[RMDB]
RNA sequence: GGGAACGACUCGAGUAGAGUCGAAAAGGAGGGCUGUUUUGGUUGCUGCAACAAUGAGUGAUCGAAGGUUGAAAAUUUGGACCGCCAUUGAUUGAUGCAAUCUGGUGUUGAACAGCACUGAACAGGGGUCUCGAAACCAAUUCGUUGGUUUCGAGACAAAAGAAACAACAACAACAAC
Reactivity to DMS in 0.01 (KOAc 150mM, MgCl2 10mM, bicine 150mM(pH8.5), 24C), signal-to-noise 1, nucleotides 027 to 126: g010g010a090g000g000g020c010u020g020u000u010u000u030g010g020u000u010g000c000u010g030c020a030a030c000a020a010u010g000a180g030u000g000a050u000c000g010a040a020g010g000u010u000g010a080a050a130a140u000u010u000g020g020a020c040c000g010c040c000a010u010u000g010a110u000u000g000a200u000g010c020a030a020u000c010u000g010g030u010g010u020u020g010a000a050c080a040g000c010a030c030u000g000a050a050c110a070g020g010g020
Conditions: 150 mM KOAc, 10 mM MgCl2 and 150 mM bicine (pH 8.5), 24 C.
This 177-nucleotide RNA was probed chemically with DMS.
DMS adducts were read by reverse transcription with MarathonRT.